RNA sequence: GGGAACGACUCGAGUAGAGUCGAAAAGUCCAUCAAAGUUUCUGACCUAUCAGGUUCCGACGGUUGGGUAUUGGCCAACCGUGCCUAUAACGGGUAACGGGGGAUUAGGGUUUGAUUUCGGAGAGGGAACAGUACAGAUGUUCGCAUCUGUACUGUUAAAAGAAACAACAACAACAAC
Reactivity to 2A3 in 0.01 (KOAc 150mM, MgCl2 10mM, bicine 150mM(pH8.5), 24C), signal-to-noise 9, nucleotides 027 to 126: g030u000c010c000a050u080c040a030a080a030g020u010u030u010c030u040g030a040c010c010u050a080u150c060a050g010g060u050u050c030c020g020a010c000g010g030u010u010g030g000g040u210a300u170u270g190g060c000c000a000a000c000c000g000u000g000c000c000u160a160u070a250a040c110g020g000g010u020a050a040c030g050g010g000g000g080a030u040u160a060g040g030g030u040u040u090g090a110u030u080u130c040g010g010a050g010a020g050g010g010
Reactivity to DMS in 0.01 (KOAc 150mM, MgCl2 10mM, bicine 150mM(pH8.5), 24C), signal-to-noise 6, nucleotides 027 to 126: g010u010c010c010a130u010c100a040a150a190g010u010u000u010c020u010g000a070c030c020u010a100u020c120a060g010g020u020u010c030c030g020a060c030g010g000u000u000g000g010g010u020a140u020u040g020g000c010c000a010a010c010c000g010u010g000c050c040u000a070u020a080a140c220g010g000g020u010a070a120c070g010g000g000g000g010a070u010u030a110g000g000g000u000u010u000g010a090u010u010u010c070g030g000a270g000a050g000g000g010